[RMDB]
RNA sequence: GGGAACGACUCGAGUAGAGUCGAAAAGGCUUGGAACAUUCCAAGCAGACCUGGCCGGGAAGCCAGCCUCCCCCUCAGAGAAGGCUAAAGGCUGCACGGCCCAGCUCUGGCGGGAGAGGAACCGUGAGGUAAGCGGUAUUUUCGAAUACCGCUUACCAAAAGAAACAACAACAACAAC
Reactivity to DMS in 0.01 (KOAc 150mM, MgCl2 10mM, bicine 150mM(pH8.5), 24C), signal-to-noise 2, nucleotides 027 to 126: g000g000c040u000u000g020g010a060a300c240a260u010u000c000c000a020a000g010c020a040g000a070c140c010u000g010g020c000c000g030g030g010a210a110g000c000c000a030g000c020c000u010c010c000c000c010c020u000c040a030g000a020g000a300a080g000g000c030u000a150a160a160g000g010c000u000g000c060a130c190g010g010c000c000c050a040g000c020u000c020u000g010g010c240g040g000g000a070g010a050g000g000a040a070c030c040g000u000g010a260